[RMDB]
RNA sequence: GGGAACGACUCGAGUAGAGUCGAAAACGGAUUCGACAGGGACGGAUCGAGCUUGAGCUGCGAGCCGAGAGGCGAUCUCGUAAAAACGCACCUAAAUAUAACUGGCAAAUCUAACCAGAACUUAGCACUAGCUGCCUAAUUAGCGCAGCGAGCUCUUUGUAGUAAAAGUGUUCGCACUUUUACUACAAAAAGAAACAACAACAACAAC
Reactivity to DMS in 0.01 (KOAc 150mM, MgCl2 10mM, bicine 150mM(pH8.5), 24C), signal-to-noise 1, nucleotides 027 to 156: c040g030g040a130u000u000c020g020a180c030a140g000g000g000a200c110g000g010a080u020c010g010a060g000c030u000u000g000a170g060c020u000g000c040g010a290g010c030c010g000a070g060a180g040g050c050g020a140u010c030u000c020g000u080a070a120a030a060a100c010g030c000a140c200c060u000a050a060a140u000a070u000a110a290c010u000g000g010c050a020a190a130u000c100u000a130a040c010c050a140g000a110a130c100u000u000a030g010c070a170c080u000a080g020c030u000g000c030c010u000a160a090u000u040a050g000c110g000c030a010g030c000g000a080g000c010u000c020u000u000
Reactivity to 2A3 in 0.01 (KOAc 150mM, MgCl2 10mM, bicine 150mM(pH8.5), 24C), signal-to-noise 6, nucleotides 027 to 156: c030g030g020a040u020u030c010g030a020c040a080g010g040g050a020c010g000g020a010u040c030g020a020g030c020u040u060g040a020g030c020u040g030c050g020a020g060c050c010g000a010g000a000g010g000c000g060a170u050c000u000c020g120u120a010a000a000a030a010c010g010c000a040c010c040u090a070a150a070u180a070u040a120a080c010u020g020g020c050a090a080a130u070c070u070a040a090c010c000a010g020a050a070c050u110u110a030g020c020a030c060u040a020g000c020u010g000c000c010u120a240a260u180u190a080g040c030g000c070a000g000c010g010a010g000c010u000c010u000u020